An RNA of 177 nucleotides, treated with 2A3 and DMS and read out base by base. For 2A3, 2,656 sequencing reads were counted. For 2A3 the reverse transcriptase was SuperScript II with manganese. The data come from the RNA Mapping Database (RMDB), library OK1LIB. DMS adducts were read by reverse transcription with MarathonRT. The RNA was probed in 150 mM KOAc, 10 mM MgCl2 and 150 mM bicine (pH 8.5) at 24 C.
RNA sequence: GGGAACGACUCGAGUAGAGUCGAAAAGCUCUAGGAGACUAGAGCAAUACGUACGAGCGAUCGUGUCACUGAACUCUGAUAGCCAGUUCAGAGGCUGUCAAAGGACAUAGCUAUAGCUAUGUCCAAAGACGAUUCAUAGGUUCGCCUAUGAAUCGUCAAAAGAAACAACAACAACAAC
Reactivity to 2A3 in 0.01 (KOAc 150mM, MgCl2 10mM, bicine 150mM(pH8.5), 24C), signal-to-noise 3, nucleotides 027 to 126: g000c000u000c000u000a000g020g030a090g040a080c000u000a010g000a000g000c010a030a010u060a010c010g060u020a020c050g000a030g050c030g030a000u020c010g020u020g050u050c020a010c070u050g060a030a010c030u020c020u030g010a040u030a000g010c010c000a030g000u060u070c050a020g060a040g120g000c000u020g000u050c000a050a050a120g000g000a000c000a000u010a000g000c030u130a090u070a300g000c000u000a010u000g000u020c000c020a000a010a000
Reactivity to DMS in 0.01 (KOAc 150mM, MgCl2 10mM, bicine 150mM(pH8.5), 24C), signal-to-noise 2, nucleotides 027 to 126: g000c000u010c000u010a010g000g000a140g000a210c000u000a000g050a000g000c020a050a010u020a040c120g030u000a050c060g000a030g000c140g000a060u000c010g010u010g000u000c050a110c100u000g060a060a040c020u000c060u020g000a090u010a020g010c050c200a070g020u000u000c060a060g050a070g000g020c000u000g010u000c050a070a140a100g000g000a010c000a000u000a000g000c000u010a110u000a230g000c000u000a000u000g000u000c000c000a030a020a050